Notes
Conditions: 150 mM KOAc, 10 mM MgCl2 and 150 mM bicine (pH 8.5), 24 C. Structure probing data (2A3 and DMS) for a 177-nucleotide construct. Values cover nucleotides 27 to 126. For 2A3, 16,270 sequencing reads were counted.
RNA sequence: GGGAACGACUCGAGUAGAGUCGAAAAGUACGAUUUUUCGAAAUCGUACGAAGGUCACGUGGCAGCACCACGACACUGGUCGCGGCGACCGAGCCGAACAGAAUAUGUGUAAUUUCGAUUACACAAAAGGAAAUGUUAAGUUCGCUUAACAUUUCCUAAAAGAAACAACAACAACAAC
Reactivity to 2A3 in 0.01 (KOAc 150mM, MgCl2 10mM, bicine 150mM(pH8.5), 24C), signal-to-noise 6, nucleotides 027 to 126: g000u000a000c000g000a000u000u000u000u020u110c100g070a010a010a010u000c000g000u000a000c000g000a080a010g040g010u020c020a000c060g000u020g020g000c030a030g030c040a040c080c020a070c080g070a050c030a020c050u100g100g010u090c040g000c000g020g020c060g010a030c020c010g000a030g010c000c020g030a090a030c040a050g190a180a040u200a090u160g010u000g000u000a010a010u020u080u090c100g020a000u000u010a000c000a000c010a030a070a020
Reactivity to DMS in 0.01 (KOAc 150mM, MgCl2 10mM, bicine 150mM(pH8.5), 24C), signal-to-noise 7, nucleotides 027 to 126: g010u000a000c000g010a010u000u010u000u000u020c150g010a020a010a010u000c000g010u000a000c000g010a080a100g010g010u000c020a080c080g010u000g000g010c020a060g000c070a210c050c060a050c100g010a070c140a080c120u000g010g010u010c040g030c010g000g020c060g010a030c030c030g010a130g020c000c010g010a080a120c140a100g010a120a080u010a100u000g010u000g000u010a010a010u000u000u020c180g010a040u000u000a010c000a010c000a020a040a090
2A3 is a SHAPE reagent: it acylates the 2'-hydroxyl of flexible nucleotides of all four kinds. The data come from the RNA Mapping Database (RMDB), library M2PK50.